The record gives the reactivity of an RNA of 207 nucleotides to 2A3.
It was measured as part of the RMDB library OK3TST.
The RNA was probed in 150 mM KOAc, 10 mM MgCl2 and 150 mM bicine (pH 8.5) at 24 C.
Reactivities are given for positions 27 through 156.
RNA sequence: GGGAACGACUCGAGUAGAGUCGAAAAAGCUUCACAAGCCUAUAUGGCAAACAUGAUGUGGUGGGAUGAAGCAUUUGAUGGUAUAAGUUUGCCACAGAGAACUGGCUCUAUACUAUCGAGGACACCUUCGCUGUCAUCCAUUUCUUCUUGGCAUUCAAAUCCUUCGGUGAUUCGUCACCGAAGGAUUAAAAGAAACAACAACAACAAC
Reactivity to 2A3 in 0.01 (KOAc 150mM, MgCl2 10mM, bicine 150mM(pH8.5), 24C), signal-to-noise 1, nucleotides 027 to 156: a000g000c060u030u020c020a000c010a200a120g000c010c000u240a200u200a120u300g010g000c060a020a130a040c130a030u130g000a060u100g070u030g040g000u050g000g090g000a060u000g000a000a000g000c000a000u120u000u140g060a060u030g000g050u080a050u000a170a110g070u120u190u170g000c000c010a020c000a000g210a000g020a230a080c100u030g000g000c040u020c000u040a040u040a000c010u020a000u040c000g000a000g050g010a040c060a080c110c000u210u190c010g000c040u040g100u080c000a000u000c040c030a030u010u040u050c010u090u000c020u090u080g050g000c040a050u140u130c060a170